[RMDB]
RNA sequence: GGGAACGACUCGAGUAGAGUCGAAAAUCGAUACGGCUAUGCGGCUUUGCAGCAUAAUGAAUUUUUGGGACAAAACUUCUGCCCAGGACUCAACGUAACAGCAAACAAUACCUGUAGCUAUGCAAUAAACUUCCUGACAUUUCGAUGUCAGGAAGUUAAAAGAAACAACAACAACAAC
Reactivity to 2A3 in 0.01 (KOAc 150mM, MgCl2 10mM, bicine 150mM(pH8.5), 24C), signal-to-noise 1, nucleotides 027 to 126: u050c010g000a040u030a080c070g010g000c010u020a030u120g060c070g020g040c070u030u040u110g000c030a050g010c010a030u120a160a080u200g130a020a060u090u010u110u170u090g010g040g000a040c040a010a150a120a070c100u160u030c060u090g050c000c020c030a030g040g040a030c020u030c070a000a020c060g040u090a090a060c060a010g070c070a060a020a060c050a090a070u040a110c000c020u020g000u000a000g070c030u020a000u140g030c000a000a000u080a200
Reactivity to DMS in 0.01 (KOAc 150mM, MgCl2 10mM, bicine 150mM(pH8.5), 24C), signal-to-noise 1, nucleotides 027 to 126: u000c070g020a080u000a050c070g000g000c030u000a020u000g030c040g020g000c110u000u000u000g020c010a170g010c000a020u010a080a200u020g010a080a050u000u050u000u010u020g000g020g000a110c080a040a050a090a140c250u010u000c150u000g020c030c000c000a040g000g000a010c040u000c040a020a060c250g020u020a100a040c100a020g000c020a080a060a100c090a060a090u020a060c050c010u010g070u000a030g010c060u000a000u000g000c110a020a150u010a090